[RMDB]
RNA sequence: GGGAACGACUCGAGUAGAGUCGAAAAGAUAUGGACGACUAUGACAGCUUGGAUUUAGGGUCGGAAACGACCCUUGUCAGCUGCAUAUCGUCCUAAGUCAAAACCAAUUAUCUUCGGAUAAUUGGAACAAUAGGAGUACGUUCGCGUACUCCUAUUGAAAAGAAACAACAACAACAAC
Reactivity to DMS in 0.01 (KOAc 150mM, MgCl2 10mM, bicine 150mM(pH8.5), 24C), signal-to-noise 6, nucleotides 027 to 126: g010a040u000a300u000g000g000a010c000g020a030c300u010a010u000g000a150c000a010g010c000u000u020g020g000a030u000u010u000a010g010g010g040u010c000g020g000a070a090a180c010g000a010c000c000c010u000u000g000u000c000a020g000c010u000g000c010a010u000a040u000c000g000u010c000c000u000a010a080g010u000c060a110a100a150a220c000c000a010a010u000u000a000u000c000u000u010c250g030g010a010u000a000a010u000u010g000g010a070a080
Reactivity to 2A3 in 0.01 (KOAc 150mM, MgCl2 10mM, bicine 150mM(pH8.5), 24C), signal-to-noise 2, nucleotides 027 to 126: g020a040u080a040u190g010g000a000c000g020a050c240u050a020u070g140a300c020a010g020c020u180u300g210g010a070u300u300u190a010g000g010g010u000c000g010g000a040a020a010c020g010a010c040c010c010u010u000g000u000c000a000g000c010u000g000c000a000u000a010u000c000g000u000c000c000u000a040a020g020u000c040a010a000a100a220c010c000a000a000u010u000a000u000c020u070u110c300g170g000a000u010a000a000u010u000g010g020a030a050
This 177-nucleotide RNA was probed chemically with DMS and 2A3. The RNA was probed in 150 mM KOAc, 10 mM MgCl2 and 150 mM bicine (pH 8.5) at 24 C. For 2A3, 12,560 sequencing reads were counted. For DMS, 8,702 sequencing reads were counted.